[RMDB]
Structure probing data (2A3 and DMS) for a 177-nucleotide construct. The data come from the RNA Mapping Database (RMDB), library OK2TST. The 2A3 profile rests on 1,864 reads.
RNA sequence: GGGAACGACUCGAGUAGAGUCGAAAAUGAUUUUGAUGAUCAGGGUGCUCAAUUUGAUCACCAGAACUCAACAGAAAACUUGCCUCAGGCCAUUUAGUUAAGAUAUGAUCCAGCGUGCGAUGCCAAGCUUCAGUAGUGUGUUCGCACACUACUGAAGAAAAGAAACAACAACAACAAC
Reactivity to 2A3 in 0.01 (KOAc 150mM, MgCl2 10mM, bicine 150mM(pH8.5), 24C), signal-to-noise 2, nucleotides 027 to 126: u040g030a050u030u040u060u120g050a040u020g010a000u020c020a010g090g000g000u080g030c020u010c080a110a280u180u120u200g000a020u030c000a010c020c000a000g020a070a030c020u000c050a030a010c020a060g090a050a090a040a060c030u040u070g020c010c010u050c040a040g040g030c020c000a050u120u140u110a100g040u060u100a090a050g020a090u070a060u110g070a040u000c040c030a010g000c030g040u050g020c050g010a020u050g000c010c020a040a000g020
Reactivity to DMS in 0.01 (KOAc 150mM, MgCl2 10mM, bicine 150mM(pH8.5), 24C), signal-to-noise 3, nucleotides 027 to 126: u010g010a110u000u000u000u000g020a080u000g010a040u000c020a100g000g020g000u000g000c140u010c090a110a120u010u000u010g020a030u000c010a020c000c010a060g000a050a050c120u000c040a050a120c140a130g010a050a070a060a090c080u000u000g010c010c010u000c080a090g010g010c060c060a020u010u000u000a080g020u000u000a060a090g010a110u000a040u010g000a050u000c040c040a060g000c110g010u010g020c020g010a050u010g000c010c050a090a120g010